[RMDB]
RNA sequence: GGGAACGACUCGAGUAGAGUCGAAAAAGGUAACGCCCAAUCUUCUUGGAACUCCUCAAGGAGGAGUAAUCUCUCCUUUAUUAGCUAAUAUUGCCUUAACUGGUCUUGAAGAUGAACUCAAACACUAACUCCUACGUUAGUUCGCUAACGUAGGAGUAAAAGAAACAACAACAACAAC
Reactivity to 2A3 in 0.01 (KOAc 150mM, MgCl2 10mM, bicine 150mM(pH8.5), 24C), signal-to-noise 3, nucleotides 027 to 126: a010g100g010u060a040a030c040g030c010c000c000a010a020u040c030u050u000c030u000u040g100g010a080a090c000u020c040c020u020c070a130a070g100g020a010g000g020a010g050u040a050a090u050c100u020c010u030c010c000u040u060u030a130u050u100a050g000c020u060a110a020u080a280u230u120g040c010c000u090u060a070a070c100u050g040g000u010c030u020u040g030a020a010g010a030u050g020a010a020c020u050c130a090a050a050c030a020c100u130a110
Reactivity to DMS in 0.01 (KOAc 150mM, MgCl2 10mM, bicine 150mM(pH8.5), 24C), signal-to-noise 2, nucleotides 027 to 126: a060g000g000u000a080a070c240g030c010c000c020a110a060u000c030u010u000c030u010u000g000g000a120a120c040u010c020c030u000c050a090a110g030g010a040g010g000a060g040u010a050a050u000c070u020c030u010c010c000u000u000u000a050u000u000a050g000c000u000a050a050u000a090u000u010g000c040c040u010u010a060a090c100u000g030g000u000c040u000u000g030a010a020g000a040u000g010a080a050c170u010c100a090a060a090c180a070c110u000a090

Structure probing data (2A3 and DMS) for a 177-nucleotide construct. The DMS profile rests on 1,534 reads. The reactions ran in a buffer of 150 mM KOAc, 10 mM MgCl2 and 150 mM bicine (pH 8.5), at 24 C. Values cover nucleotides 27 to 126. DMS adducts were read by reverse transcription with MarathonRT.